An RNA of 177 nucleotides, treated with 2A3 and read out base by base.
The 2A3 profile rests on 503 reads.

RNA sequence: GGGAACGACUCGAGUAGAGUCGAAAACUCAUUCACGGUUAAGUCUGUCUCUGGCAGAGCAGACCGUCAGGAGGAAGAGGUCACCAUCUUCACGAAGCCAAAGCCAAAUUCCGCCUUGUCCUGUAAACGACGCACUACCUUUCGAGGUAGUGCGUCGAAAAGAAACAACAACAACAAC
Reactivity to 2A3 in 0.01 (KOAc 150mM, MgCl2 10mM, bicine 150mM(pH8.5), 24C), signal-to-noise 1, nucleotides 027 to 126: c010u020c010a090u080u080c050a010c100g080g000u060u000a050a060g080u040c000u000g010u000c000u070c120u240g040g080c030a000g000a040g080c070a000g030a080c010c010g020u000c050a030g010g000a000g010g020a040a000g030a000g070g050u020c000a040c140c000a030u050c000u000u070c040a040c100g010a150a000g000c030c060a100a060a000g010c000c000a040a040a010u150u000c000c000g000c000c040u010u000g000u000c000c000u040g030u070a130a060a040
Notes:
2A3 is a SHAPE reagent: it acylates the 2'-hydroxyl of flexible nucleotides of all four kinds.